[RMDB]
RNA sequence: GGGAACGACUCGAGUAGAGUCGAAAAACGCAAGACAGUUCAGCAUUUCCCUAAGUGGUUUAGAAUGAUUAGAAGUACAAUCAACAAUAUGGUUUGUGUAGUUAUGCUGAAAAUCGUUGAGGUUGUACUCCUAAGUUGAGUUCGCUCAACUUAGGAGAAAAGAAACAACAACAACAAC
Reactivity to DMS in 0.01 (KOAc 150mM, MgCl2 10mM, bicine 150mM(pH8.5), 24C), signal-to-noise 1, nucleotides 027 to 126: a060c110g010c070a100a120g000a150c120a120g010u000u010c060a070g010c040a090u000u000u010c030c030c010u000a040a100g030u000g010g010u010u000u020a060g010a120a000u010g000a040u000u010a080g030a110a090g000u000a000c030a020a020u000c000a030a140c050a080a120u000a070u000g040g000u000u020u000g020u000g020u020a030g020u000u030a080u010g010c000u000g000a080a010a020a030u000c060g010u010u000g000a140g000g000u000u000g000u000a060